[RMDB]
This 177-nucleotide RNA was probed chemically with 2A3 and DMS. Source: RMDB libraries RFM100 and RFMREP, as collected in RNAgym. The reactions ran in a buffer of 150 mM KOAc, 10 mM MgCl2 and 150 mM bicine (pH 8.5), at 24 C. Values cover nucleotides 27 to 126.
RNA sequence: GGGAACGACUCGAGUAGAGUCGAAAAUUGCCUGGGUCUGACUUUGCCUCAGUGAAAACUGCCUCGAAUUCUUUCUUGCACCGAUGGGCAGAUGGGCAGUGUCGGAGGAUCGUGUCAUCUGUCCCGUCGAACAUUGAAGUUUCGACUUCAAUGUUCGAAAAGAAACAACAACAACAAC
Reactivity to 2A3 in 0.01 (KOAc 150mM, MgCl2 10mM, bicine 150mM(pH8.5), 24C), signal-to-noise 7, nucleotides 027 to 126: u110u090g080c000c000u020g040g000g010u000c020u040g030a070c010u060u070u100g010c000c010u040c030a040g030u060g160a040a060a020a030c020u030g010c000c000u030c050g040a090a090u120u030c020u050u110u010c030u020u110g010c070a080c100c010g070a070u110g000g020g000c000a000g000a050u050g010g040g050c020a050g020u030g040u100c060g050g080a070g050g040a040u070c080g020u030g020u050c000a030u010c020u020g100u070c000c020c000g030u020
Reactivity to DMS in 0.01 (KOAc 150mM, MgCl2 10mM, bicine 150mM(pH8.5), 24C), signal-to-noise 3, nucleotides 027 to 126: u020u030g020c010c000u000g020g020g000u020c020u000g010a040c050u010u000u020g010c040c010u000c050a050g030u040g000a070a040a090a070c020u000g000c020c010u020c110g010a110a130u030u010c070u000u010u000c040u010u000g000c130a090c130c040g010a030u000g010g000g000c030a030g030a050u020g020g000g000c000a050g020u010g020u000c030g000g020a150g040g040a060u010c200g010u000g000u000c010a010u010c050u010g000u000c000c000c040g000u020